[RMDB]
Record summary: This 207-nucleotide RNA was probed chemically with DMS and 2A3. The reactions ran in a buffer of 150 mM KOAc, 10 mM MgCl2 and 150 mM bicine (pH 8.5), at 24 C. For DMS, 2,414 sequencing reads were counted. High 2A3 reactivity points to a flexible backbone, as in loops and unpaired stretches.
RNA sequence: GGGAACGACUCGAGUAGAGUCGAAAAGUGGUGCGCGGAGAGGGUAACCACCGGCGCGCAUCACUGAUAUAUCCACCGGGGGGUAAGGGGAGAAAAGGAUACAGCGCGACGAAGUUAGCACGCUGCCGAAAUGUACCCACAUUCGUGUGGGUACAAAUCUAAUCCCGAAAUUCGUUUCGGGAUUAGAAAAAGAAACAACAACAACAAC
Reactivity to DMS in 0.01 (KOAc 150mM, MgCl2 10mM, bicine 150mM(pH8.5), 24C), signal-to-noise 1, nucleotides 027 to 156: g040u010g000g010u000g010c000g050c010g010g010a210g020a120g000g010g050u010a060a180c180c140a110c000c000g000g030c000g010c020g000c010a030u010c010a040c040u010g020a050u000a080u010a170u010c030c020a200c040c000g000g000g020g000g020g000u020a080a060g000g000g000g000a130g000a060a070a080a080g000g010a180u000a060c000a050g040c000g080c040g010a130c050g000a100a110g010u000u000a120g010c040a050c120g010c010u000g000c000c060g000a060a100a130u000g000u000a010c020c000c000a040c010a050u000u010c270g020u010g030u000g000g000g000u000a010c010a010a040a130
Reactivity to 2A3 in 0.01 (KOAc 150mM, MgCl2 10mM, bicine 150mM(pH8.5), 24C), signal-to-noise 1, nucleotides 027 to 156: g010u010g000g020u000g000c020g000c010g060g090a100g050a110g170g000g000u090a090a040c080c020a040c000c040g060g030c000g000c010g020c000a000u000c000a000c010u030g000a010u000a010u020a040u090c010c040a000c020c010g000g010g010g000g020g010u060a020a030g130g000g040g000a040g020a040a100a020a010g040g000a010u080a160c040a040g020c010g030c020g090a130c060g020a130a040g090u090u060a010g030c050a000c030g020c050u040g030c020c010g010a020a060a050u080g000u000a000c000c030c010a000c000a020u040u080c180g020u030g000u000g010g020g030u000a000c000a000a000a000